Conditions: 150 mM KOAc, 10 mM MgCl2 and 150 mM bicine (pH 8.5), 24 C. The record gives the reactivity of an RNA of 170 nucleotides to 2A3 and DMS. It was measured as part of the RMDB library 15KLIB. For 2A3, 23,230 sequencing reads were counted. Reactivities are given for positions 27 through 129. For 2A3 the reverse transcriptase was SuperScript II with manganese. For DMS the reverse transcriptase was MarathonRT. High DMS reactivity at an A or C suggests that its Watson-Crick edge is free.
[RMDB]
RNA sequence: GGGAACGACUCGAGUAGAGUCGAAAACAUGUGUGGCGUUGAUGGAAAACCCAUUAGUGCCUACGCAUUUUUAAUGGCCAAGGAUGGAAUAACCAAACUGGCUGAUGUUGAAGCGGACGUCGCAGCAGGAGUUCUUGGUUCGCCAAGAACAAAAGAAACAACAACAACAAC
Reactivity to 2A3 in 0.01 (KOAc 150mM, MgCl2 10mM, bicine 150mM(pH8.5), 24C), signal-to-noise 9, nucleotides 027 to 129: c070a000u010g000u000g000u000g010g000c010g000u000u000g010a000u000g000g010a050a050a070a110c020c000c000a000u000u010a000g010u000g000c000c000u010a010c000g000c000a010u000u000u000u000u060a150a140u160g030g000c010c030a090a060g040g010a020u040g010g050a160a140u180a190a100c020c020a060a030a050c020u020g030g000c040u060g080a100u120g030u090u090g050a100a010g020c020g010g000a050c020g030u070c030g020c040a020g010c020a010g000g130a100
Reactivity to DMS in 0.01 (KOAc 150mM, MgCl2 10mM, bicine 150mM(pH8.5), 24C), signal-to-noise 6, nucleotides 027 to 129: c130a030u030g020u020g030u010g000g000c000g030u000u000g010a000u000g010g040a130a160a110a230c280c020c010a000u000u040a050g000u030g040c020c000u050a000c020g040c000a000u020u020u010u000u050a070a100u010g050g000c050c010a050a060g000g000a240u000g000g000a250a140u070a120a130c000c000a030a040a180c070u000g000g030c010u000g040a090u060g000u010u070g020a120a090g000c070g010g000a010c030g030u000c030g000c080a050g000c000a060g020g020a150